[RMDB]
RNA sequence: GGGAACGACUCGAGUAGAGUCGAAAAACGUGCUCGACGACCUCGCGGAGAACACUGGAACCGACCUCCGUGACCGGAUCGUCCUCGAGGAGCGGUUCUGCAUCGAGGACUUCGCCGACCGGUACAAAAUUAUAUCCUCCUUCGGGAGGAUAUAAUUAAAAGAAACAACAACAACAAC
Reactivity to 2A3 in 0.01 (KOAc 150mM, MgCl2 10mM, bicine 150mM(pH8.5), 24C), signal-to-noise 8, nucleotides 027 to 126: a000c060g030u070g010c030u030c050g050a050c010g040a040c010c010u010c010g010c020g020g010a050g030a100a030c100a070c160u170g050g070a030a050c050c030g060a090c020c010u020c020c030g050u040g030a030c030c010g050g020a120u080c070g010u010c010c000u010c000g040a040g080g100a170g040c020g070g100u190u110c120u210g020c010a050u010c000g000a010g010g000a020c020u060u040c120g050c030c010g020a050c000c000g000g010u010a020c040a020a170
Reactivity to DMS in 0.01 (KOAc 150mM, MgCl2 10mM, bicine 150mM(pH8.5), 24C), signal-to-noise 6, nucleotides 027 to 126: a070c060g000u020g010c030u000c020g020a070c040g000a100c040c020u000c040g000c020g000g010a050g010a080a090c150a070c090u020g010g010a070a070c080c060g000a130c160c010u010c010c050g020u010g000a010c040c050g010g000a090u020c090g000u000c000c000u000c050g000a020g000g000a110g010c020g020g020u030u020c070u040g030c020a130u010c000g000a020g000g000a070c060u000u010c060g020c050c050g010a070c020c010g000g010u000a080c130a050a060

Background:
Source: RMDB library OK1LIB, as collected in RNAgym. This 177-nucleotide RNA was probed chemically with 2A3 and DMS. For 2A3 the reverse transcriptase was SuperScript II with manganese. The RNA was probed in 150 mM KOAc, 10 mM MgCl2 and 150 mM bicine (pH 8.5) at 24 C. For 2A3, 9,871 sequencing reads were counted.